RNA sequence: GGGAACGACUCGAGUAGAGUCGAAAAGAUAUGGAAACCAUGAAUUCUCUAGACAGUCGGAAACGACCGAAGAACAUGAGUUUCCUAAGUCAAAACUUCAAUAUACGCUUCGGCGUAUAUUGAAGAAGUUCUAUUGUUGGUUCGCCAACAAUAGAACAAAAGAAACAACAACAACAAC
Reactivity to DMS in 0.01 (KOAc 150mM, MgCl2 10mM, bicine 150mM(pH8.5), 24C), signal-to-noise 3, nucleotides 027 to 126: g000a060u010a300u020g010g010a020a020a010c010c000a010u000g020a140a200u010u000c050u020c240u030a140g020a190c300a060g000u010c010g010g020a110a080a190c010g010a020c000c010g000a080a040g000a020a110c020a000u000g000a150g000u000u000u010c000c000u010a030a070g000u010c050a050a070a090a150c010u000u010c000a020a010u000a000u000a000c000g010c000u000u020c200g020g000c000g030u000a000u000a000u000u010g000a020a000g010a050a100
Reactivity to 2A3 in 0.01 (KOAc 150mM, MgCl2 10mM, bicine 150mM(pH8.5), 24C), signal-to-noise 3, nucleotides 027 to 126: g000a010u040a020u150g000g010a020a000a000c000c010a010u020g020a070a300u180u030c060u000c000u070a070g010a190c060a060g030u010c000g030g030a100a080a120c020g000a010c020c040g100a080a010g000a030a010c000a010u070g030a120g230u000u010u000c010c000u000a130a000g040u030c030a010a010a120a230c000u000u000c000a000a000u000a000u000a000c000g000c000u010u090c260g130g000c010g000u000a010u010a000u010u000g000a000a000g000a010a010
An RNA of 177 nucleotides, treated with DMS and 2A3 and read out base by base. The RNA was probed in 150 mM KOAc, 10 mM MgCl2 and 150 mM bicine (pH 8.5) at 24 C.